The record gives the reactivity of an RNA of 207 nucleotides to 2A3 and DMS. The DMS profile rests on 11,832 reads. For DMS the reverse transcriptase was MarathonRT. As a SHAPE reagent, 2A3 marks flexible, mostly unpaired nucleotides at the ribose 2'-OH. For 2A3, 5,664 sequencing reads were counted.
RNA sequence: GGGAACGACUCGAGUAGAGUCGAAAAACAAGAUUCGUCUUGUGUAGGGCGUACUACAAAGGGACCGCAACAGCCCUAUAUUGGGUCGUCCCAAAUAGGACGACCAGGUAGGGACAUGCUAGUACCUUUGUAUCGCAAGUUUGUCUUUCGAGACAAAGAAAUAGUAAUUCUUCGGAAUUACUAUUUCAAAAGAAACAACAACAACAAC
Reactivity to 2A3 in 0.01 (KOAc 150mM, MgCl2 10mM, bicine 150mM(pH8.5), 24C), signal-to-noise 5, nucleotides 027 to 156: a000c010a000a010g020a030u120u160c210g060u010c100u020u030g010u030g140u210a140g070g110g000c010g030u100a130c030u010a000c030a000a000a010g030g000g000a010c000c010g000c020a060a040c040a150g040c000c030c000u000a000u000a020u030u110g230g010g010u010c010g010u010c010c020c020a120a170a080u270a040g000g010a000c000g000a000c000c000a000g000g030u000a000g030g000g030a060c030a080u030g000c000u020a000g010u010a000c000c000u020u000u000g010u020a020u220c000g000c000a020a090g030u020u060u030g010u000c020u030u100u100c220g090a030g000a010c000a010a060a010
Reactivity to DMS in 0.01 (KOAc 150mM, MgCl2 10mM, bicine 150mM(pH8.5), 24C), signal-to-noise 3, nucleotides 027 to 156: a060c020a020a050g000a080u000u000c230g040u000c000u000u000g020u000g000u000a110g000g010g010c030g020u000a090c110u000a020c020a010a030a040g010g000g010a020c070c080g010c020a050a040c040a100g000c010c000c000u000a030u000a020u010u010g030g020g030u000c010g020u000c000c000c010a030a110a150u020a050g000g000a040c010g010a030c010c000a010g020g030u000a030g010g030g010a030c030a300u000g000c020u000a070g010u000a030c010c010u000u000u000g010u000a010u010c020g020c040a150a110g020u000u000u000g000u000c010u000u000u010c130g020a120g020a090c030a050a060a160